[RMDB]
RNA sequence: GGGAACGACUCGAGUAGAGUCGAAAACGAUCCUCGAGAGAGGAUCGACGAGUCUUCGGACUCGAUUACCGCGUAGAUGUGCCGCGGGGCUACGAUGGUAUUGUGGGAAAGAAUACCAUUGUACCUUCUUGUCGUAGCCGAACAACUUGCACGUCGAAAUCCCAUAUGACUUCGGUCAUAUGGGAUUAAAAGAAACAACAACAACAAC
Reactivity to 2A3 in 0.01 (KOAc 150mM, MgCl2 10mM, bicine 150mM(pH8.5), 24C), signal-to-noise 8, nucleotides 027 to 156: c010g010a000u010c010c000u010c010g070a090g000a010g000a000g020g000a000u000c000g000a020c000g000a000g000u000c010u030u140c230g090g010a000c000u010c000g000a060u130u180a080c010c000g000c010g000u030a100g000a010u000g000u000g000c010c000g020c020g040g030g000g010c000u010a000c000g030a010u100g000g000u000a000u020u040g000u020g020g020g030a070a230a070g130a100a050u080a120c000c000a000u000u020g000u000a000c000c000u170u230c110u120u260g020u030c010g000u000a000g000c000c000g010a050a020c050a030a040c050u060u080g000c000a000c000g000u000c000g000a030
Reactivity to DMS in 0.01 (KOAc 150mM, MgCl2 10mM, bicine 150mM(pH8.5), 24C), signal-to-noise 2, nucleotides 027 to 156: c030g020a020u000c000c000u000c000g030a300g010a300g020a010g020g000a000u000c000g010a080c040g020a000g000u000c000u000u000c300g050g000a030c010u000c000g020a080u000u000a170c010c020g020c090g030u010a130g010a020u010g000u000g020c060c060g040c030g030g000g000g000c020u030a020c000g000a070u000g020g000u010a020u000u000g040u010g010g010g010a120a180a220g000a170a180u000a060c000c000a000u000u000g020u010a030c020c020u000u000c130u000u000g020u000c000g040u000a040g000c040c010g020a080a110c090a060a090c100u020u000g010c000a040c020g010u010c000g000a070
Source information
Chemical mapping of a 207-nucleotide RNA with 2A3 and DMS. The data come from the RNA Mapping Database (RMDB), library OK3TST. The DMS profile rests on 4,850 reads. For 2A3 the reverse transcriptase was SuperScript II with manganese. For DMS the reverse transcriptase was MarathonRT. The 2A3 profile rests on 9,621 reads.